[RMDB]
The record gives the reactivity of an RNA of 207 nucleotides to 2A3.
The 2A3 profile rests on 2,065 reads.
RNA sequence: GGGAACGACUCGAGUAGAGUCGAAAAGAUAUGGAUGUACCAGUAUUCAACAUAAGCUUGGAUUUAGACCAUCGGAAACGAUGGUCUUGUCAGCUUAUGCGCAUUUACUGUGUACAUCCUAAGUCAAAACAACCCGUGUGUUCGCACACGGGUUGAACGUAUGGCUUUCGUUCGCGAAAGCCAUACGAAAAGAAACAACAACAACAAC
Reactivity to 2A3 in 0.01 (KOAc 150mM, MgCl2 10mM, bicine 150mM(pH8.5), 24C), signal-to-noise 2, nucleotides 027 to 156: g010a000u090a020u110g000g000a000u000g000u000a000c000c000a020g030u010a040u020u070c070a130a090c000a040u000a010a000g000c000u120u220g070g020a040u280u140u070a010g000a010c000c010a000u000c000g000g030a080a060a030c010g020a010u000g000g000u000c000u000u010g000u010c000a000g020c000u000u000a000u010g000c000g010c010a010u070u070u000a000c000u000g040u030g010u210a010c000a000u020c000c000u000a000a000g000u000c020a010a010a050a080c000a000a000c000c000c000g000u000g010u000g010u000u100c280g030c160a000c010a010c000g000g020g000u030u020g000a000a000
Reactivities are given for positions 27 through 156.